[RMDB]
Description: The data come from the RNA Mapping Database (RMDB), library OK1LIB. Chemical mapping of a 177-nucleotide RNA with 2A3 and DMS. Reactivities are given for positions 27 through 126. The reactions ran in a buffer of 150 mM KOAc, 10 mM MgCl2 and 150 mM bicine (pH 8.5), at 24 C. DMS adducts were read by reverse transcription with MarathonRT. 2A3 adducts were read by reverse transcription with SuperScript II with manganese.

RNA sequence: GGGAACGACUCGAGUAGAGUCGAAAAUCACAUGCAGGACGAUAUUCACUGUCCGGCCCUCAAUAUGACUAAAUAUCGACCUAAUUCUUACGGGACACGGCGAAUCUCACAAGCGAAUUGAAAAACACACCUUAUGAAUUUUCGAAUUCAUAAGGUGAAAAGAAACAACAACAACAAC
Reactivity to 2A3 in 0.01 (KOAc 150mM, MgCl2 10mM, bicine 150mM(pH8.5), 24C), signal-to-noise 9, nucleotides 027 to 126: u060c010a050c030a070u160g040c040a020g020g000a010c010g020a010u020a070u110u100c080a040c140u080g030u030c000c020g030g000c010c010c000u080c020a090a100u150a120u270g070a060c050u110a060a020a070u120a040u040c030g050a090c000c000u050a090a080u120u090c040u080u070a030c040g020g000g020a010c010a010c040g030g000c020g030a040a040u030c020u020c020a050c020a090a020g040c040g080a070a050u110u150g070a090a080a010a090a000c080a010
Reactivity to DMS in 0.01 (KOAc 150mM, MgCl2 10mM, bicine 150mM(pH8.5), 24C), signal-to-noise 6, nucleotides 027 to 126: u030c060a060c120a060u040g000c110a050g010g030a070c020g030a050u020a050u000u010c100a070c170u030g000u010c010c050g020g000c020c010c020u010c070a080a090u030a080u040g000a080c070u000a060a050a040u020a030u010c020g010a080c020c020u020a060a120u010u010c050u010u040a090c120g000g000g000a080c060a060c050g010g020c020g000a030a050u010c030u010c030a060c110a050a060g000c070g030a070a080u030u030g010a060a050a040a110a070c190a170